An RNA of 177 nucleotides, treated with DMS and 2A3 and read out base by base. For 2A3, 782 sequencing reads were counted.
RNA sequence: GGGAACGACUCGAGUAGAGUCGAAAAAGCUCUUUGCGCAGACGAACUGAGUCACCGGCUUUCUCACUUGCGUUCUUGAUAGCAAACUCAGCGGCGUUAUCAGUGCGGUAUCCGAGAUCAUCAAAAAGCUUGUAUAGUCUUUCGAGACUAUACAAGCAAAAGAAACAACAACAACAAC
Reactivity to DMS in 0.01 (KOAc 150mM, MgCl2 10mM, bicine 150mM(pH8.5), 24C), signal-to-noise 2, nucleotides 027 to 126: a090g020c020u000c050u010u000u000g020c070g000c130a070g000a140c140g000a110a100c040u010g010a060g000u020c050a140c140c100g000g010c050u000u010u030c020u000c010a070c100u010u020g020c020g010u000u000c060u000u000g000a050u000a080g050c050a050a120a080c100u000c070a080g030c050g020g000c030g030u000u000a040u000c040a010g010u010g020c100g000g000u000a050u000c040c030g020a220g000a120u010c050a070u000c070a060a100a060a070a080
Reactivity to 2A3 in 0.01 (KOAc 150mM, MgCl2 10mM, bicine 150mM(pH8.5), 24C), signal-to-noise 1, nucleotides 027 to 126: a000g050c030u090c000u010u020u130g040c080g000c050a040g070a090c000g010a140a050c050u130g000a010g050u060c030a060c080c010g000g000c020u000u120u000c070u020c020a140c050u110u160g070c000g060u000u020c000u060u100g080a070u070a040g060c070a080a080a090c040u040c040a010g050c040g110g000c000g020u040u030a080u080c020a020g030u000g070c010g080g020u010a010u050c010c000g070a070g000a100u000c020a020u110c060a010a040a120a000a040